[RMDB]
RNA sequence: GGGAACGACUCGAGUAGAGUCGAAAAUUGUGGUGUCUUGACAUGAAAGAAGAGAUUAAGAGACUCGCCAGCUGACUUUGUUCGAGGAUUGUCUUGUCAGUUGGGUAAAUUUAGACAGUCCCUAUGAUUGUAGACGCUGAUAUAGCAAGGCAUUUGGCUAUCUUAUAUCGUUCGCGAUAUAAGAUAGAAAAGAAACAACAACAACAAC
Reactivity to 2A3 in 0.01 (KOAc 150mM, MgCl2 10mM, bicine 150mM(pH8.5), 24C), signal-to-noise 9, nucleotides 027 to 156: u080u080g030u050g030g020u020g020u020c020u040u050g040a050c030a090u130g100a110a050a080g060a040a020g030a010g010a030u070u100a100a030g020a010g020a070c010u010c040g040c010c000a000g000c010u000g000a010c010u100u130u170g070u170u190c080g050a060g020g010a020u020u020g010u000c010u040u040g010u000c010a020g000u010u030g010g000g000u080a070a070a030u090u100u030a020g000a010c000a000g000u000c000c000c000u050a080u130g110a120u050u140g040u060a030g010a080c050g000c040u030g080a070u070a030u090a200g040c030a030a020g040g010c040a040u040u040u110g060g000
Reactivity to DMS in 0.01 (KOAc 150mM, MgCl2 10mM, bicine 150mM(pH8.5), 24C), signal-to-noise 5, nucleotides 027 to 156: u010u010g040u010g010g030u000g010u000c020u010u000g010a090c050a130u000g000a110a130a130g000a090a130g010a180g000a110u010u010a080a130g010a170g000a070c020u000c030g020c020c000a040g010c020u010g000a030c030u010u010u000g020u000u000c050g010a090g030g010a060u000u000g010u000c010u000u000g020u000c010a030g010u010u000g010g010g010u000a020a050a130u000u000u000a060g010a040c030a050g010u000c010c000c040u000a090u000g010a120u000u010g040u000a110g010a100c100g020c040u000g010a100u010a100u000a090g000c040a050a110g010g020c040a120u000u000u000g020g000
The record gives the reactivity of an RNA of 207 nucleotides to 2A3 and DMS. The reactions ran in a buffer of 150 mM KOAc, 10 mM MgCl2 and 150 mM bicine (pH 8.5), at 24 C. Reactivities are rounded to 0.1 and cut off at 0 and 3. 2A3 adducts were read by reverse transcription with SuperScript II with manganese. The data come from the RNA Mapping Database (RMDB), library RSTRND. For DMS, 14,243 sequencing reads were counted.